Overview
Chemical mapping of a 177-nucleotide RNA with DMS and 2A3. Conditions: 150 mM KOAc, 10 mM MgCl2 and 150 mM bicine (pH 8.5), 24 C. Values cover nucleotides 27 to 126. The data come from the RNA Mapping Database (RMDB), library OK2TRN. 2A3 adducts were read by reverse transcription with SuperScript II with manganese.

RNA sequence: GGGAACGACUCGAGUAGAGUCGAAAACAGUGGUUCCUGGUGGAGAUCUGGCCAAAGUACAGAGAGCCGUGUGCAUGUUGAGCAACACCACAGCUAUCGCUGAGGCCUGGGCUCGUCUGGACCACAACAAUCGGUGUGGUUUCGACCACACCGAUUGAAAAGAAACAACAACAACAAC
Reactivity to DMS in 0.01 (KOAc 150mM, MgCl2 10mM, bicine 150mM(pH8.5), 24C), signal-to-noise 2, nucleotides 027 to 126: c130a100g000u000g000g010u010u020c020c020u000g000g020u020g010g020a020g000a030u000c020u000g020g040c040c010a010a190a040g020u000a120c150a200g000a050g020a030g000c010c050g020u000g000u000g010c130a060u030g030u000u000g000a210g020c210a060a020c040a050c110c020a040c000a020g000c030u010a060u000c020g000c030u000g010a300g000g020c000c050u000g000g000g000c010u010c000g000u000c000u000g020g010a030c010c010a000c000a120a110
Reactivity to 2A3 in 0.01 (KOAc 150mM, MgCl2 10mM, bicine 150mM(pH8.5), 24C), signal-to-noise 2, nucleotides 027 to 126: c060a030g000u000g000g040u240u240c010c020u060g000g100u120g180g060a020g000a120u090c020u020g000g000c000c010a040a050a000g040u060a110c100a120g060a020g000a000g000c020c030g030u030g000u050g040c200a120u050g060u070u130g210a190g150c080a000a020c000a010c050c000a010c020a010g030c000u030a010u110c030g010c040u030g010a010g000g020c000c000u020g030g060g000c010u010c010g000u000c000u010g010g000a010c000c000a010c010a000a020